[RMDB]
RNA sequence: GGGAACGACUCGAGUAGAGUCGAAAAAGUUUCUCGAUAAUUGAUCUGUAGAAUCUGUCAAGCAAAACCCCAAAACCUUACACUGAGAGCAUUUAGCCUGACUACUCUUUAAAUCAAAUCAGGCAAUUCAAGGUCGCAGUCUUCGGACUGCGACCAAGAGGAUAGAUGAGUUCGCUCAUCUAUCCUCAAAAGAAACAACAACAACAAC
Reactivity to 2A3 in 0.01 (KOAc 150mM, MgCl2 10mM, bicine 150mM(pH8.5), 24C), signal-to-noise 1, nucleotides 027 to 156: a000g010u000u030u000c000u020c000g040a090u080a250a150u120u140g050a070u020c080u160g110u130a020g040a090a110u040c000u040g090u090c040a040a000g020c060a080a100a150a210c000c000c000c090a000a100a000a000c040c040u080u120a040c060a050c100u110g000a000g000a000g060c030a020u060u000u170a010g000c000c000u000g000a000c000u020a040c010u030c040u020u250u080a040a060a030u140c050a000a000a110u010c000a010g020g000c000a000a030u140u040c050a100a000g010g000u020c000g050c000a040g000u030c020u010u000c080g040g010a000c000u020g020c000g000a000c000c000a010a030
Chemical mapping of a 207-nucleotide RNA with 2A3. 2A3 adducts were read by reverse transcription with SuperScript II with manganese. Conditions: 150 mM KOAc, 10 mM MgCl2 and 150 mM bicine (pH 8.5), 24 C.